[RMDB]
RNA sequence: GGGAACGACUCGAGUAGAGUCGAAAAACACAUACGGCGCGGAAGGCGUGUUUGCUGACGUUUCCAUUCCCUUGUUUCAAUCAUUGGUUAAUCCCUUGAUUCCUUUGGGGAUUUUUGGGUUAAACUGCGCGUUCACUAGAUUCGUCUAGUGAACGCGAAAAGAAACAACAACAACAAC
Reactivity to 2A3 in 0.01 (KOAc 150mM, MgCl2 10mM, bicine 150mM(pH8.5), 24C), signal-to-noise 2, nucleotides 027 to 126: a000c020a000c000a010u120a080c180g050g010c010g050c020g170g060a280a050g070g000c000g030u020g050u100u020u090g060c030u030g000a050c010g030u050u000u070c010c000a030u010u050c020c020c000u000u010g010u000u000u010c120a180a190u030c110a150u020u120g010g000u040u040a110a070u070c000c000c010u000u000g020a010u040u040c030c030u060u120u220g110g020g000g090a120u040u000u000u000u040g040g000g010u010u010a070a050a010c010u040g000
The record gives the reactivity of an RNA of 177 nucleotides to 2A3. 2A3 adducts were read by reverse transcription with SuperScript II with manganese. Reactivities are given for positions 27 through 126. Values are in units of 0.01, from 0 to 300, in steps of 10. For 2A3, 722 sequencing reads were counted.